Conditions: 150 mM KOAc, 10 mM MgCl2 and 150 mM bicine (pH 8.5), 24 C. Chemical mapping of a 207-nucleotide RNA with DMS and 2A3. DMS adducts were read by reverse transcription with MarathonRT. Reactivities are given for positions 27 through 156. The DMS profile rests on 10,743 reads. It was measured as part of the RMDB library OK3TST. For 2A3, 8,339 sequencing reads were counted.
RNA sequence: GGGAACGACUCGAGUAGAGUCGAAAACCGUCGCUUUCUACGACACAGCGAUCAACACCGACAUCCCCGACGAUGCCGUAGAGAUCACCGCAGACGAGCACGCCGCUCUGCUCGUGGCCCAGGCGCGCGGCAAGCGCAUCGCAGCCGGCAAAGACGGCAUCUACUUCAUGUUCGCAUGAAGUAGAUGAAAAGAAACAACAACAACAAC
Reactivity to DMS in 0.01 (KOAc 150mM, MgCl2 10mM, bicine 150mM(pH8.5), 24C), signal-to-noise 4, nucleotides 027 to 156: c020c030g010u000c030g010c020u010u010u000c060u000a060c020g020a100c060a150c060a090g000c040g000a060u000c010a060a200c090a090c090c000g010a050c020a040u000c000c010c000c230g020a100c050g000a060u000g010c010c020g030u020a100g000a300g000a060u010c000a010c020c040g030c040a160g010a090c010g010a070g000c010a080c050g000c050c020g000c070u000c030u010g000c000u000c040g000u010g020g020c010c030c040a180g010g010c050g020c060g040c040g010g030c080a070a180g020c030g020c000a060u000c020g020c040a150g000c030c010g000g000c030a050a060a130g000a050c020g000g000
Reactivity to 2A3 in 0.01 (KOAc 150mM, MgCl2 10mM, bicine 150mM(pH8.5), 24C), signal-to-noise 7, nucleotides 027 to 156: c020c010g010u020c020g010c040u080u150u060c050u120a070c070g080a050c050a010c020a110g040c030g030a030u080c050a060a100c050a050c100c060g090a060c040a140u100c030c020c020c030g040a060c060g020a040u050g010c030c010g020u040a040g010a010g000a140u100c030a030c040c030g010c030a020g040a140c010g000a010g030c010a000c070g020c010c000g010c030u010c010u030g000c020u020c030g030u030g030g010c000c020c020a060g060g030c020g000c010g000c010g050g020c020a040a040g040c040g010c040a030u070c040g000c040a020g040c050c000g040g020c040a060a060a020g040a010c010g010g000